RNA sequence: GGGAACGACUCGAGUAGAGUCGAAAAAACAACCACAGGCAUGGCUCAGCUUUGCCUGUGACAUCGGGGAAAAGAGCAAGUGGCUAUUUCUACACUCAGUGUUCAGAAGCCAGUGAGCACUAAGAAUUUCAUCAAUGAAGUUCGCUUCAUUGAUGAAAAAAGAAACAACAACAACAAC
Reactivity to DMS in 0.01 (KOAc 150mM, MgCl2 10mM, bicine 150mM(pH8.5), 24C), signal-to-noise 4, nucleotides 027 to 126: a050a040c120a100a080c140c000a010c000a000g000g000c000a030u010g010g030c010u060c290a100g000c000u000u000u010g020c000c000u000g000u000g000a050c090a100u030c070g000g010g000g000a100a040a050a050g010a040g020c060a090a080g000u010g010g000c100u000a120u010u000u000c020u000a100c120a090c010u000c060a040g010u010g000u000u000c050a030g000a070a080g010c050c090a050g010u020g000a060g000c010a030c020u000a090a040g030a100a110u010
Reactivity to 2A3 in 0.01 (KOAc 150mM, MgCl2 10mM, bicine 150mM(pH8.5), 24C), signal-to-noise 8, nucleotides 027 to 126: a000a000c070a010a010c030c010a000c000a000g000g000c010a000u020g020g000c050u110c300a070g000c000u070u010u010g000c000c000u000g000u000g010a000c010a050u130c070g000g000g000g080a020a060a070a040g100a020g020c050a120a050g070u040g070g000c010u060a090u040u090u010c040u040a050c050a020c070u140c050a040g000u000g020u030u010c010a020g050a170a040g090c030c010a020g060u020g020a000g000c010a000c020u010a020a020g060a050a050u010
The record gives the reactivity of an RNA of 177 nucleotides to DMS and 2A3. Values cover nucleotides 27 to 126. High DMS reactivity at an A or C suggests that its Watson-Crick edge is free. DMS adducts were read by reverse transcription with MarathonRT. Source: RMDB libraries RFM100 and RFMREP, as collected in RNAgym.